[RMDB]
RNA sequence: GGGAACGACUCGAGUAGAGUCGAAAACUUGCAGAAUGACCGCACAGAUGAGGGUCUGGAUGAAUGCCGUAUAGAAGGAGCCGUGGAUAAAAUAUGUCGCAACCGCAAAGGCAAGCAAUGCACCGAUAUCAUUUCGUAUGUUCGCAUACGAAAUGAUAAAAGAAACAACAACAACAAC
Reactivity to 2A3 in 0.01 (KOAc 150mM, MgCl2 10mM, bicine 150mM(pH8.5), 24C), signal-to-noise 1, nucleotides 027 to 126: c000u030u190g000c020a010g060a170a090u090g030a090c010c080g030c090a020c020a070g150a120u120g020a120g080g000g010u010c010u030g070g000a030u050g050a110a050u160g020c040c000g050u120a150u010a190g120a130a010g010g020a020g000c030c010g040u060g060g010a020u080a090a120a000a000u100a080u100g020u020c000g000c050a040a020c070c020g000c030a110a020a000g050g000c010a020a010g000c030a030a030u080g020c050a040c000c010g000a000u030
Reactivity to DMS in 0.01 (KOAc 150mM, MgCl2 10mM, bicine 150mM(pH8.5), 24C), signal-to-noise 1, nucleotides 027 to 126: c040u030u010g000c060a060g030a090a040u000g000a080c040c020g020c100a140c100a150g000a070u010g000a100g010g010g010u000c010u000g040g000a080u000g000a150a140u000g000c000c060g030u010a140u000a070g010a030a080g020g000a100g000c040c070g000u000g000g020a050u010a040a030a100a060u000a020u030g000u010c040g000c030a080a140c050c080g000c120a030a130a130g000g020c040a050a100g010c050a060a110u000g020c020a130c080c050g010a110u000